An RNA of 207 nucleotides, treated with DMS and 2A3 and read out base by base. High DMS reactivity at an A or C suggests that its Watson-Crick edge is free. Reactivities are given for positions 27 through 156. For DMS the reverse transcriptase was MarathonRT. Source: RMDB library RNAMAK, as collected in RNAgym.

RNA sequence: GGGAACGACUCGAGUAGAGUCGAAAACGCUGGGUGUGUUCCCGACUCAUGAGGGAGUCAAAGCCUCACUGAAGCGCGCACGGUGAGGCUUUGACAUCGAUCUCAUGAAGUCGAACACACACCUGUGCUGAAGCGCGCACGGCAACCGAAAGGUGCGGCUUUAAUAGCUGUUCGCAGCUAUUAAAGCAAAAGAAACAACAACAACAAC
Reactivity to DMS in 0.01 (KOAc 150mM, MgCl2 10mM, bicine 150mM(pH8.5), 24C), signal-to-noise 1, nucleotides 027 to 156: c090g020c050u000g000g020g060u010g000u000g000u000u000c030c080c030g010a040c010u000c010a000u000g000a050g010g000g010a030g040u000c010a010a020a030g000c000c010u010c010a020c000u020g000a040a060g000c030g050c000g020c010a300c020g010g000u000g010a010g020g000c010u010u000u010g000a030c000a080u010c120g000a080u010c020u010c010a000u000g000a080a060g020u010c010g000a030a040c040a050c040a010c010a000c020c000u000g000u020g010c000u010g010a110a070g010c020g000c010g000c010a060c080g020g040c020a110a150c030c030g010a140a180a220g000g050u000g010c030g030
Reactivity to 2A3 in 0.01 (KOAc 150mM, MgCl2 10mM, bicine 150mM(pH8.5), 24C), signal-to-noise 2, nucleotides 027 to 156: c040g020c030u060g000g000g020u000g000u000g000u050u050c080c140c060g000a000c000u010c000a000u000g000a010g000g000g010a030g010u000c010a010a000a000g000c070c000u010c000a000c010u020g030a170a060g010c020g000c000g000c010a030c020g020g000u000g010a010g020g000c020u010u000u010g000a000c000a010u120c010g010a010u000c000u000c000a000u000g010a050a020g010u000c000g090a130a030c030a000c000a000c020a110c040c000u060g040u090g020c080u150g050a090a020g010c000g000c010g010c010a000c010g080g000c050a100a170c010c010g060a110a030a030g040g000u010g020c010g020